[RMDB]
RNA sequence: GGGAACGACUCGAGUAGAGUCGAAAAGAAGGCACUUUCGAGUGCCUUCAUGGGGAGCUCAGGUCUCCCUCCCUUGCAUACUCCCUAAGGGAGGAGACCUAAUUAGGUGCACUUUCGAGUGCACCAAUCACAUGACGGAGUUCGCUCCGUCAUGUGAAAAAGAAACAACAACAACAAC
Reactivity to DMS in 0.01 (KOAc 150mM, MgCl2 10mM, bicine 150mM(pH8.5), 24C), signal-to-noise 2, nucleotides 027 to 126: g000a000a000g000g010c000a000c000u010u000u000c190g000a030g040u000g000c000c000u000u000c000a080u000g000g010g000g000a220g010c090u000c140a030g000g000u000c000u000c090c030c030u000c000c000c000u000u000g000c170a160u000a240c140u010c020c020c010u010a050a010g000g010g000a060g010g000a010g000a020c000c000u000a030a050u010u000a100g030g010u000g000c000a000c000u000u000u010c180g010a010g000u000g010c000a000c000c000a000a020
Reactivity to 2A3 in 0.01 (KOAc 150mM, MgCl2 10mM, bicine 150mM(pH8.5), 24C), signal-to-noise 1, nucleotides 027 to 126: g000a000a000g010g010c040a010c030u040u080u160c280g060a010g000u000g000c020c010u000u020c000a000u000g020g000g000g000a050g020c040u060c250a020g000g010u020c000u020c000c060c000u010c010c000c000u000u000g060c030a120u080a300c040u130c010c010c040u020a000a000g000g000g010a010g000g000a000g010a000c000c000u030a050a110u120u130a050g000g010u010g020c020a000c020u050u050u100c300g070a000g000u010g000c000a010c000c000a010a020